[RMDB]
RNA sequence: GGGAACGACUCGAGUAGAGUCGAAAAGGUCUUGACAUUGGUGCUGAGAACCUCCAAGCUAGUGAGUCUCGCAUCCGCGAUCUUAACAUGGCUGAAGAGACUGUGAAGCUCACCACCAACCAAAUCCUCCCAAGAUCGUAUUCGUACGAUCUUGGGAAAAAGAAACAACAACAACAAC
Reactivity to 2A3 in 0.01 (KOAc 150mM, MgCl2 10mM, bicine 150mM(pH8.5), 24C), signal-to-noise 2, nucleotides 027 to 126: g040g000u030c040u130u050g040a050c010a120u020u050g030g000u030g000c020u020g040a010g000a100a090c020c000u000c000c000a020a000g000c000u010a010g000u030g010a020g000u040c020u000c200g030c030a100u090c090c150g000c010g020a030u020c000u000u000a010a060c030a230u130g020g000c010u000g010a070a000g010a040g030a120c110u140g090u110g300a110a040g010c000u010c010a020c000c000a000c000c010a010a000c040c000a000a040a030u010c020c030
Reactivity to DMS in 0.01 (KOAc 150mM, MgCl2 10mM, bicine 150mM(pH8.5), 24C), signal-to-noise 3, nucleotides 027 to 126: g000g000u010c120u000u000g020a090c250a300u000u000g010g010u000g000c230u010g020a000g000a080a100c160c020u000c010c010a160a090g000c030u000a100g030u000g000a030g000u000c280u000c000g010c020a100u010c230c230g000c010g010a000u000c020u010u000a070a020c060a100u000g010g020c030u000g030a060a250g020a050g010a130c220u010g010u000g010a140a170g030c020u000c000a020c200c000a000c000c010a000a050c170c040a030a090a070u000c030c030
An RNA of 177 nucleotides, treated with 2A3 and DMS and read out base by base.
The 2A3 profile rests on 1,367 reads.
The data come from the RNA Mapping Database (RMDB), library OK2TST.
The RNA was probed in 150 mM KOAc, 10 mM MgCl2 and 150 mM bicine (pH 8.5) at 24 C.